[RMDB]
RNA sequence: GGGAACGACUCGAGUAGAGUCGAAAAGGCAGGCACCGUAUGUGCUCGACCACGACCAUAACUCAGGGCGUUGCCGAGGCGUUCUCUGUCGCGGCUGCAACGGUGCUGAGGGAAAGGUUGCCAACGCACCGACUAUUAGUUUCGACUAAUAGUCGGUAAAAGAAACAACAACAACAAC
Reactivity to DMS in 0.01 (KOAc 150mM, MgCl2 10mM, bicine 150mM(pH8.5), 24C), signal-to-noise 9, nucleotides 027 to 126: g010g030c040a110g010g010c010a010c010c300g030u000a090u010g020u000g010c010u000c030g000a250c030c030a170c120g000a030c010c050a060u000a160a230c040u000c030a040g000g000g000c010g000u000u000g010c010c030g000a040g000g000c000g010u000u010c070u000c070u000g010u010c050g020c070g000g010c100u010g010c030a030a010c020g010g010u000g020c010u000g010a060g010g000g000a070a130a050g010g020u000u000g010c020c040a110a110c230g000c200
Reactivity to 2A3 in 0.01 (KOAc 150mM, MgCl2 10mM, bicine 150mM(pH8.5), 24C), signal-to-noise 8, nucleotides 027 to 126: g020g000c020a020g000g000c020a000c010c060g170u210a140u300g040u010g010c010u030c030g060a110c000c020a040c030g010a020c010c010a070u040a100a050c010u010c040a020g060g180g000c020g010u030u030g000c010c010g010a030g020g000c040g030u150u090c150u040c160u270g170u170c050g010c030g230g010c080u070g010c010a020a000c010g130g140u280g210c010u010g000a020g020g010g010a040a090a040g020g000u020u030g020c010c020a020a040c100g030c050